RNA sequence: GGGAACGACUCGAGUAGAGUCGAAAAUGCAUGUGCAUUCAUGAAGUGGAGAGAAAUGAUAAAUGCUUUCAUUUGAGUCAGAGUCGUACACAUCACAGGCAGCUGCUGUGAGCGCUGUUAUUACAGUAACGUAAGGCGUGUUCGCACGCCUUACGUUAAAAGAAACAACAACAACAAC
Reactivity to DMS in 0.01 (KOAc 150mM, MgCl2 10mM, bicine 150mM(pH8.5), 24C), signal-to-noise 1, nucleotides 027 to 126: u080g010c020a110u060g000u030g000c000a060u000u000c030a010u010g020a170a110g010u000g010g010a030g030a120g010a010a120a050u030g020a030u000a050a100a020u050g010c050u000u000u010c040a070u000u070u000g020a180g000u020c040a150g000a040g060u010c050g010u010a090c020a060c060a160u050c060a020c040a030g010g000c070a060g030c050u030g040c000u000g030u010g000a120g040c170g010c040u000g030u000u000a050u000u070a030c140a040g000u000
Reactivity to 2A3 in 0.01 (KOAc 150mM, MgCl2 10mM, bicine 150mM(pH8.5), 24C), signal-to-noise 2, nucleotides 027 to 126: u050g000c020a030u050g080u030g020c000a010u000u060c000a030u060g040a100a000g040u070g130g030a120g010a020g050a020a070a050u030g090a040u130a130a170a030u150g070c060u050u070u050c040a090u040u060u070g060a030g090u050c050a020g010a000g000u020c020g000u030a070c000a030c000a040u030c010a020c000a010g100g000c060a030g110c160u210g020c000u020g030u060g100a010g040c070g000c040u010g000u060u050a090u040u090a030c020a010g100u010

Chemical mapping of a 177-nucleotide RNA with DMS and 2A3.